RNA sequence: GGGAACGACUCGAGUAGAGUCGAAAAGGCCAAUAUGGUGAAACCUCAUCUCUAUUGAAAAUACAAAAAUCAGCCAGGCACGGUGGCAGGCGCCUGUAGUCCACCUACUCGGGAGGCUGAGGCAGGAGAACUGCUUGAACCCAGCGGCAGAGGUUGACAUUAUGGUACUAUUCGUAGUACCAUAAUGAAAAGAAACAACAACAACAAC
Reactivity to 2A3 in 0.01 (KOAc 150mM, MgCl2 10mM, bicine 150mM(pH8.5), 24C), signal-to-noise 2, nucleotides 027 to 156: g050g000c060c000a050a070u190a080u180g080g030u100g040a070a080a060c000c050u060c040a090u030c030u010c040u070a170u120u120g070a060a030a060a080u180a070c100a110a120a030a060a050u060c010a000g000c030c000a040g060g000c040a000c110g000g050u010g010g040c040a010g170g030c080g030c020c040u070g000u090a030g110u040c030c020a090c030c000u060a130c060u060c040g030g060g020a030g010g000c040u020g000a040g040g010c020a000g000g080a060g010a100a060c030u060g000c000u030u040g030a010a030c000c000c000a040g000c030g050g000c060a030g000a020g040g000u000u040g000a010
Reactivity to DMS in 0.01 (KOAc 150mM, MgCl2 10mM, bicine 150mM(pH8.5), 24C), signal-to-noise 1, nucleotides 027 to 156: g040g000c000c000a070a120u010a100u010g000g020u010g010a040a040a030c000c040u010c030a110u000c020u000c010u000a170u020u010g010a080a040a070a070u000a190c040a030a050a090a050a070u000c040a080g050c030c020a060g020g020c020a060c040g000g090u000g000g060c040a030g020g000c010g030c020c050u010g020u020a050g000u020c010c010a080c010c030u000a020c030u000c040g010g000g000a060g010g010c020u000g000a050g040g020c030a030g000g010a100g000a040a090c040u000g010c000u000u000g030a040a090c020c010c020a120g000c120g020g020c040a110g020a050g020g020u010u000g000a200

Structure probing data (2A3 and DMS) for a 207-nucleotide construct. The 2A3 profile rests on 933 reads. For 2A3 the reverse transcriptase was SuperScript II with manganese. Source: RMDB library OK3TST, as collected in RNAgym. The DMS profile rests on 2,492 reads. The RNA was probed in 150 mM KOAc, 10 mM MgCl2 and 150 mM bicine (pH 8.5) at 24 C.